[RMDB]
Annotation: Conditions: 150 mM KOAc, 10 mM MgCl2 and 150 mM bicine (pH 8.5), 24 C. Chemical mapping of a 177-nucleotide RNA with DMS and 2A3.

RNA sequence: GGGAACGACUCGAGUAGAGUCGAAAAGUAAGCGCAGGCACACCACAGUGCCUGCUAUCACGGCAUUAUCGCCAGCGGUGCUGCCGUGAUGCGGUCUUCGCAAGGACCGCAACAUGAAGGUACGAUGGAUAAUUGUUGUGUUCGCACAACAAUUAUCAAAAGAAACAACAACAACAAC
Reactivity to DMS in 0.01 (KOAc 150mM, MgCl2 10mM, bicine 150mM(pH8.5), 24C), signal-to-noise 3, nucleotides 027 to 126: g010u000a070a150g020c140g030c020a000g000g010c000a010c010a040c070c040a130c130a090g000u000g000c010c010u020g030c000u000a020u000c010a000c020g000g000c000a020u000u000a050u000c010g030c090c200a090g010c020g030g020u000g000c110u010g000c030c000g000u000g000a000u010g020c000g000g000u000c000u000u000c250g000c280a140a130g010g000a020c000c000g000c000a040a060c170a060u000g010a100a060g020g020u000a060c100g010a110u010g000
Reactivity to 2A3 in 0.01 (KOAc 150mM, MgCl2 10mM, bicine 150mM(pH8.5), 24C), signal-to-noise 4, nucleotides 027 to 126: g080u100a060a050g110c040g000c070a000g010g020c010a000c000a010c050c040a120c030a060g000u000g000c000c000u000g020c000u000a000u000c000a000c000g000g000c010a010u010u010a020u070c010g040c100c100a050g090c060g000g020u010g000c010u000g000c000c000g010u000g010a010u010g010c000g000g000u000c010u080u090c160g040c140a080a050g010g000a000c000c000g000c000a000a010c060a070u160g090a060a040g120g020u120a040c060g040a110u200g080
For 2A3, 6,054 sequencing reads were counted. For DMS the reverse transcriptase was MarathonRT. It was measured as part of the RMDB library RFMREP.